An RNA of 177 nucleotides, treated with 2A3 and read out base by base.
RNA sequence: GGGAACGACUCGAGUAGAGUCGAAAAGACUGCCGUGGAACAUUGGUUGAUUUAGUUCUUAAAGAUAUGAAGACGGAUGUCCUGCGCCCUAUUAUCAGUGACAUCUCUAUGCAGGCGCUGAAUUAUGGGCGCCGAUUAUGUUCGCAUAAUCGGCGCCAAAAGAAACAACAACAACAAC
Reactivity to 2A3 in 0.01 (KOAc 150mM, MgCl2 10mM, bicine 150mM(pH8.5), 24C), signal-to-noise 1, nucleotides 027 to 126: g000a000c000u040g210c120c000g040u280g000g040a080a080c080a190u000u190g180g060u190u300g000a230u200u050u000a000g140u020u000c000u000u170a190a190a040g020a040u000a000u210g120a000a020g000a000c060g060g000a040u020g000u000c000c000u000g000c000g080c020c000c000u220a250u260u000a140u100c000a000g000u040g140a270c080a190u000c000u060c140u140a170u300g060c060a170g100g000c000g000c000u000g000a210a190u140u090a000u000g000